[RMDB]
RNA sequence: GGGAACGACUCGAGUAGAGUCGAAAAAUGGCACCUGUACAUAUGCCAUCGACUUGGCAAUCGGAAGUGAUAAGAUUGCAUUCCUGGAGCUAAGCAUAACCCAGGGGCCCAGGUUCGCUAUGUCAUCCUGCACCUAGAUAUUCGUAUCUAGGUGCAGAAAAGAAACAACAACAACAAC
Reactivity to 2A3 in 0.01 (KOAc 150mM, MgCl2 10mM, bicine 150mM(pH8.5), 24C), signal-to-noise 7, nucleotides 027 to 126: a020u030g020g000c020a030c030c060u070g090u160a060c040a100u180a050u110g000c000c000a010u020c050g110a130c040u040u080g040g020c010a000a080u050c040g060g080a120a090g110u080g100a130u070a190a060g060a130u070u070g010c020a090u050u060c000c010u030g050g010a080g010c040u060a090a000g020c020a120u070a140a110c010c000c020a020g030g000g020g000c000c020c030a010g010g000u060u090c070g010c040u050a070u120g050u010c010a050u050c010
Reactivity to DMS in 0.01 (KOAc 150mM, MgCl2 10mM, bicine 150mM(pH8.5), 24C), signal-to-noise 4, nucleotides 027 to 126: a020u000g000g010c010a050c110c050u020g000u020a070c160a060u030a130u000g000c020c020a040u020c060g000a130c010u000u000g000g020c010a020a120u000c070g000g010a080a030g030u010g000a060u000a080a110g000a290u010u010g000c030a180u030u000c010c000u000g020g010a300g030c030u010a070a120g000c100a070u020a080a110c070c010c010a090g000g010g040g000c040c040c050a070g000g000u010u000c060g000c030u010a060u010g000u030c060a120u020c090